[RMDB]
This 207-nucleotide RNA was probed chemically with DMS and 2A3. The 2A3 profile rests on 7,275 reads. It was measured as part of the RMDB library OK3TST. 2A3 adducts were read by reverse transcription with SuperScript II with manganese.
RNA sequence: GGGAACGACUCGAGUAGAGUCGAAAAGGAGGAAGGAUGUCGAAACCGAGAGGUCCUGAGGAAUCGCUUUUUAGAGUGUGACUAACAGAUUGUGUUAGUGUUUACAGCCACCGUAAACCACUCUUCAGAAACCUCAGGCGACAGUGACGGUGGCUAACGAACAUCAGUAAUUCGUUACUGAUGUUCGAAAAGAAACAACAACAACAAC
Reactivity to DMS in 0.01 (KOAc 150mM, MgCl2 10mM, bicine 150mM(pH8.5), 24C), signal-to-noise 3, nucleotides 027 to 156: g010g010a050g020g020a070a070g000g010a080u020g010u000c010g000a050a070a080c040c030g010a190g000a170g010g010u000c010c000u010g010a050g000g010a020a250u000c020g000c170u000u000u000u000u000a070g010a060g030u000g010u000g030a090c010u000a010a030c010a100g020a290u000u000g030u020g000u000u000a010g010u010g020u000u000u000a060c040a020g010c020c020a010c000c000g060u000a010a060a120c000c010a020c000u000c000u010u000c110a170g010a030a050a260c000c000u010c010a070g020g010c030g010a040c050a050g010u000g020a070c030g030g030u000g060g020c000u010a010a130
Reactivity to 2A3 in 0.01 (KOAc 150mM, MgCl2 10mM, bicine 150mM(pH8.5), 24C), signal-to-noise 7, nucleotides 027 to 156: g040g010a010g010g020a050a010g020g020a040u050g020u060c030g040a090a020a060c040c000g010a020g000a010g070g020u050c000c000u000g000a000g000g010a010a020u030c020g030c090u150u110u060u110u130a000g000a000g000u030g030u130g100a030c010u010a010a010c020a170g210a300u240u210g130u020g000u080u010a010g000u000g030u030u010u020a020c020a000g000c010c000a010c000c000g000u000a010a020a020c010c000a000c000u000c000u080u060c050a050g010a020a010a010c000c000u000c000a000g000g000c010g000a000c010a010g030u030g070a020c030g000g000u000g020g000c000u000a050a010
2A3 is a SHAPE reagent: it acylates the 2'-hydroxyl of flexible nucleotides of all four kinds. The RNA was probed in 150 mM KOAc, 10 mM MgCl2 and 150 mM bicine (pH 8.5) at 24 C. For DMS the reverse transcriptase was MarathonRT.